[RMDB]
RNA sequence: GGGAACGACUCGAGUAGAGUCGAAAAAUCUAGGUGAAGGAAGUAAGCCAAACUGUGAAGAAAUCAUCAUGAAGAGGGAGGUGUUUUGCAGUAUUAGUUAUGAUAGUGAAGCACUGGAAACAGCCUACAUGUCCAGCUGUAGAAGAGUGGCCAAGUACUAUCAUUAGCCAUUCGUGGCUAAUGAUAGAAAAGAAACAACAACAACAAC
Reactivity to DMS in 0.01 (KOAc 150mM, MgCl2 10mM, bicine 150mM(pH8.5), 24C), signal-to-noise 2, nucleotides 027 to 156: a090u000c050u010a080g060g040u000g010a070a090g030g000a060a090g010u000a090a110g040c040c030a060a060a100c030u010g000u010g030a080a130g010a050a080a080u000c050a100u000c050a150u000g010a100a090g020a100g000g010g040a090g000g010u010g000u000u000u020u000g010c010a090g000u000a060u000u000a040g010u000u000a120u000g000a040u010a100g060u010g000a070a110g020c050a040c010u000g030g000a100a040a080c030a060g020c010c030u000a040c050a050u000g020u000c040c030a050g000c020u000g000u000a090g010a080a130g010a060g020u000g010g040c030c030a010a060g000u000a140
Reactivity to 2A3 in 0.01 (KOAc 150mM, MgCl2 10mM, bicine 150mM(pH8.5), 24C), signal-to-noise 7, nucleotides 027 to 156: a000u070c070u050a040g030g000u040g050a040a030g040g020a020a020g030u110a070a020g040c040c030a060a040a050c070u050g010u060g070a060a080g040a070a130a030u110c040a030u020c010a030u170g050a040a020g020a030g040g010g000a020g030g030u020g020u030u050u030u050g020c020a010g010u070a070u140u130a080g060u070u110a070u140g080a090u060a070g060u040g070a050a000g000c030a000c030u020g020g020a050a120a030c020a020g020c000c030u100a080c040a070u070g050u050c020c010a020g000c070u040g010u020a020g030a110a010g030a010g030u050g020g000c010c000a040a010g020u030a040

An RNA of 207 nucleotides, treated with DMS and 2A3 and read out base by base. The reactions ran in a buffer of 150 mM KOAc, 10 mM MgCl2 and 150 mM bicine (pH 8.5), at 24 C. In probing experiments dimethyl sulfate is read out at A N1 and C N3, which are open when not base-paired. For 2A3, 5,613 sequencing reads were counted.